[RMDB]
RNA sequence: GGGAACGACUCGAGUAGAGUCGAAAAGGGCUGGGUACACAGUAUAUAAGAGGGCCAGUGCCUGCAGAGGGCAUCCUGAGACCCACCUCUGUCCCAUCCAGGGGAAGAGCCCAGCACAUCUGAAGGACAAGGGCCAGGAUGCACGAGAGAGGCGGGACCAUACCAUAAUAUUCGUAUUAUGGUAUGGAAAAGAAACAACAACAACAAC
Reactivity to DMS in 0.01 (KOAc 150mM, MgCl2 10mM, bicine 150mM(pH8.5), 24C), signal-to-noise 1, nucleotides 027 to 156: g010g010g010c020u010g010g000g040u010a070c080a060c060a160g030u040a300u000a080u000a080a120g030a200g010g000g010c020c020a110g000u000g000c000c000u000g000c070a150g000a210g080g010g020c000a020u000c020c020u010g010a250g010a210c020c010c030a120c010c010u000c010u000g070u000c010c090c150a110u000c110c030a070g010g000g000g040a000a060g010a250g010c000c010c010a150g070c060a090c070a070u000c040u000g000a060a080g000g000a050c080a100a140g010g050g050c060c010a080g000g020a010u010g020c000a060c040g000a120g010a090g000a080g020g000c050g010g060g000a150
Reactivity to 2A3 in 0.01 (KOAc 150mM, MgCl2 10mM, bicine 150mM(pH8.5), 24C), signal-to-noise 4, nucleotides 027 to 156: g070g020g010c080u060g030g020g020u100a040c060a000c030a130g120u040a070u010a030u060a160a080g050a070g000g020g030c030c030a050g060u060g060c010c010u030g010c040a020g060a100g120g030g030c010a000u010c010c000u110g060a200g040a300c000c000c000a020c010c000u000c010u010g090u060c000c010c020a030u080c030c040a050g000g000g020g040a050a060g030a060g050c000c010c000a030g080c050a020c010a090u160c060u060g070a140a030g020g000a010c050a080a110g040g000g000c000c000a000g000g000a010u000g020c020a030c100g050a060g010a000g000a020g070g000c040g010g000g000a020